[RMDB]
RNA sequence: GGGAACGACUCGAGUAGAGUCGAAAACAGCGCACGACGACGGCGUCGCGGCCGUCUACGACAUCGCGGUUGCGCGUCGGCGCCGACCCGCUUGAGCGGUCCCCGACGCGUCAACGUCGCGCCGGCUGACUCUAUGAUACUUCGGUAUCAUAGAGUCAAAAGAAACAACAACAACAAC
Reactivity to 2A3 in 0.01 (KOAc 150mM, MgCl2 10mM, bicine 150mM(pH8.5), 24C), signal-to-noise 4, nucleotides 027 to 126: c020a020g030c030g000c050a050c080g120a010c030g020a020c030g080g040c010g060u090c030g020c030g060g000c030c040g020u000c050u100a050c080g090a030c010a080u090c060g000c040g090g000u020u110g000c000g000c000g020u030c030g030g060c020g030c020c030g010a030c020c050c020g000c060u160u270g070a040g060c020g010g000u090c000c000c030c000g010a020c010g000c010g050u070c060a040a030c040g060u060c030g000c010g000c030c020g050g030c040u030
Reactivity to DMS in 0.01 (KOAc 150mM, MgCl2 10mM, bicine 150mM(pH8.5), 24C), signal-to-noise 3, nucleotides 027 to 126: c080a150g000c050g050c070a100c080g000a090c080g000a030c010g020g010c030g000u000c230g030c280g000g010c060c030g020u000c030u000a060c060g010a110c120a080u030c090g020c000g000g010u000u000g000c000g000c020g000u000c030g010g030c120g030c190c080g000a020c080c030c040g010c160u010u000g020a070g000c030g020g010u000c010c060c010c000g000a010c000g020c000g010u000c050a020a050c060g000u010c040g020c020g020c060c040g000g030c100u000
Conditions: 150 mM KOAc, 10 mM MgCl2 and 150 mM bicine (pH 8.5), 24 C. Chemical mapping of a 177-nucleotide RNA with 2A3 and DMS. For DMS, 1,941 sequencing reads were counted. High DMS reactivity at an A or C suggests that its Watson-Crick edge is free. DMS adducts were read by reverse transcription with MarathonRT. The data come from the RNA Mapping Database (RMDB), library RFMREP. The 2A3 profile rests on 6,496 reads.